RNA sequence: GGGAACGACUCGAGUAGAGUCGAAAAUCCUUCCUUUUCGAAGGAAGGACAGUGCACAGUCUUCGCAUCUGUGAAUCACACAACAGGCGUGUCUAUGCGAGGUUUUAAUCAAGUUCGCUUGAUUAAACCACUUAACUAUGUUCGCAUAGUUAAGUGGAAAAGAAACAACAACAACAAC
Reactivity to 2A3 in 0.01 (KOAc 150mM, MgCl2 10mM, bicine 150mM(pH8.5), 24C), signal-to-noise 9, nucleotides 027 to 126: u010c000c000u000u010c010c000u060u050u030u100c240g120a010a000g000g000a000a010g000g000a000c020a030g130u130g010c020a010c000a030g020u000c040u080u040c100g000c010a050u010c020u020g020u020g090a110a100u160c030a020c010a010c010a110a160c040a100g240g010c070g080u090g030u030c050u070a040u020g010c010g010a030g020g040u010u060u020u050a010a010u010c000a000a010g020u040u060c160g060c090u000u000g000a000u000u020a010a010a020
Reactivity to DMS in 0.01 (KOAc 150mM, MgCl2 10mM, bicine 150mM(pH8.5), 24C), signal-to-noise 9, nucleotides 027 to 126: u000c000c000u000u000c000c000u000u000u000u020c180g010a020a010g010g000a010a000g010g010a010c090a050g010u000g010c030a030c040a020g010u000c040u000u000c020g010c020a040u010c040u000g010u000g000a110a100u000c180a140c070a070c090a090a090c130a080g010g010c060g010u000g010u010c090u000a020u000g000c010g010a060g000g010u010u000u000u000a000a010u000c000a010a010g010u000u010c210g010c000u000u000g000a010u000u000a000a010a100

An RNA of 177 nucleotides, treated with 2A3 and DMS and read out base by base. 2A3 adducts were read by reverse transcription with SuperScript II with manganese. The reactions ran in a buffer of 150 mM KOAc, 10 mM MgCl2 and 150 mM bicine (pH 8.5), at 24 C. Source: RMDB library M2PK50, as collected in RNAgym. The 2A3 profile rests on 56,377 reads.